An RNA of 177 nucleotides, treated with 2A3 and DMS and read out base by base. The RNA was probed in 150 mM KOAc, 10 mM MgCl2 and 150 mM bicine (pH 8.5) at 24 C.
RNA sequence: GGGAACGACUCGAGUAGAGUCGAAAAAGAAUUGGAUGUUAUGACCGUCCAGAAAAGACAAGAUGAGAAAGUGCAGUAUUGACUGUCUUCAAACGCACCUGUCCUUGCUCAAGUGCUGGGAUUGUGUUUUGUUGUACACCUUCGGGUGUACAACAAAAAAAGAAACAACAACAACAAC
Reactivity to 2A3 in 0.01 (KOAc 150mM, MgCl2 10mM, bicine 150mM(pH8.5), 24C), signal-to-noise 1, nucleotides 027 to 126: a000g120a000a040u070u030g000g030a000u000g030u140u110a130u130g280a050c030c000g000u000c000c000a020g090a020a040a000a000g030a000c250a040a040g070a090u150g040a060g130a100a000a000g040u190g050c010a000g000u060a300u000u140g040a030c000u050g030u020c000u030u090c100a010a020a020c080g000c040a030c000c000u020g010u000c000c000u010u010g000c000u030c190a060a000g040u090g050c000u050g000g000g000a050u000u010g070u050g000u000
Reactivity to DMS in 0.01 (KOAc 150mM, MgCl2 10mM, bicine 150mM(pH8.5), 24C), signal-to-noise 2, nucleotides 027 to 126: a130g010a100a210u020u020g010g020a040u000g020u000u030a080u060g010a120c240c000g040u000c000c000a000g030a110a070a140a020g010a050c150a070a020g050a090u040g040a200g080a060a170a060g000u000g000c000a090g020u010a170u020u010g000a070c300u010g010u000c120u010u000c170a050a110a120c050g000c010a000c040c060u000g010u000c000c000u000u000g040c010u000c130a060a080g000u040g000c040u000g000g000g000a060u020u030g000u000g000u000

Values cover nucleotides 27 to 126. 2A3 adducts were read by reverse transcription with SuperScript II with manganese. For DMS the reverse transcriptase was MarathonRT.